[RMDB]
RNA sequence: GGGAACGACUCGAGUAGAGUCGAAAAUGAGCCUGAAAGUGGCCCAGGCAGAAGGGACUUCGUUGAAGAGGGGCCUUCUUGGACUGGCCAGCCCUGGCUUAGAACGGCUUGCUUUCAGCAUUUGGGACUUAGAGGAUUUGAAACGGUUUGGGUGGGAGUCCCAUACAAGUUUCGACUUGUAUGGGACAAAAGAAACAACAACAACAAC
Reactivity to 2A3 in 0.01 (KOAc 150mM, MgCl2 10mM, bicine 150mM(pH8.5), 24C), signal-to-noise 1, nucleotides 027 to 156: u080g000a000g010c000c000u000g010a080a000a000g040u040g040g040c010c120c030a020g000g080c000a040g000a000a050g020g000g050a030c010u060u000c030g130u200u270g170a290a080g030a080g010g000g050g060c000c020u010u000c010u030u020g000g080a020c000u000g000g010c060c040a010g000c060c050c020u060g030g020c040u020u010a020g020a130a010c040g030g010c000u080u120g000c000u000u120u160c070a020g000c020a050u100u170u100g000g070g010a020c040u070u110a050g000a010g100g040a060u120u080u100g070a030a050a060c070g060g030u010u100u040g170g030g000u130g020g020g010a070